[RMDB]
RNA sequence: GGGAACGACUCGAGUAGAGUCGAAAAAUUUGAUGUCAGGUAUCAUCAUUUGCCAGUUUUCUAUUGAACCAGUGCAGUCGAGCUGGCUACUUGACAAUGGCAUUGUGAGAAAAUUAGGCUACUAUUCCUUAUCACUGAAGGGUGUAACAUGCCCUUAAUUCUUUACAUUGUUCGCAAUGUAAAGAAUAAAAGAAACAACAACAACAAC
Reactivity to DMS in 0.01 (KOAc 150mM, MgCl2 10mM, bicine 150mM(pH8.5), 24C), signal-to-noise 4, nucleotides 027 to 156: a130u000u000u000g020a050u000g000u010c030a210g000g030u000a070u000c010a030u000c010a050u000u000u010g010c000c010a090g020u000u000u000u000c010u000a250u010u010g020a150a190c130c020a060g040u000g020c030a190g010u000c030g020a060g010c000u010g060g000c090u000a020c010u010u000g000a030c020a050a150u000g020g010c010a100u000u000g020u000g000a080g000a040a030a020a040u000u000a140g050g010c010u000a080c110u010a160u000u000c000c010u000u000a090u010c080a100c090u010g010a070a030g010g030g040u000g000u000a080a080c120a130u010g000c000c000c000u000u010a050
Reactivity to 2A3 in 0.01 (KOAc 150mM, MgCl2 10mM, bicine 150mM(pH8.5), 24C), signal-to-noise 9, nucleotides 027 to 156: a000u080u060u080g020a020u020g030u070c100a060g100g040u130a070u130c010a010u000c010a020u070u050u110g000c000c000a000g000u020u020u030u010c040u050a130u120u210g060a060a040c040c000a020g010u020g050c010a010g010u010c000g010a000g010c010u040g060g010c020u050a020c000u000u010g010a010c060a070a140u060g080g010c010a010u010u030g040u050g080a030g030a020a040a010a010u050u060a110g010g020c020u040a040c030u040a110u030u040c000c000u060u120a120u170c090a040c110u050g040a020a010g010g010g000u040g010u050a070a030c020a060u110g010c000c000c000u000u010a000